[RMDB]
RNA sequence: GGGAACGACUCGAGUAGAGUCGAAAACAUCGCUGCGUCAGGCACAUACACAAGUUUCAAGGUAGAAGAGACGCCUUGUUUCCUGACAUUUCAACUGAAGACCUUCCUGUAGAGAGUGAUAUUUGAGUUAUUGUUGAAGGAAGAGAUGCAUCAGAUAACUCCACGCACUAUUCGUAGUGCGUGGAGUAAAAGAAACAACAACAACAAC
Reactivity to 2A3 in 0.01 (KOAc 150mM, MgCl2 10mM, bicine 150mM(pH8.5), 24C), signal-to-noise 1, nucleotides 027 to 156: c090a050u140c000g020c050u060g100c000g010u000c030a010g020g000c040a010c030a130u300a090c100a000c030a170a030g000u020u070u040c020a020a020g000g020u030a070g050a300a040g050a020g000a050c040g060c000c010u000u010g000u000u030u000c000c000u000g000a010c000a020u120u280u160c110a140a130c060u000g100a070a000g000a010c000c000u010u000c020c070u040g070u260a080g000a000g000a010g060u050g080a160u010a130u080u120u150g080a070g010u000u000a010u030u040g060u050u070g010a030a010g020g050a000a050g030a000g050a070u120g130c010a090u110c010a050g000a120u230a040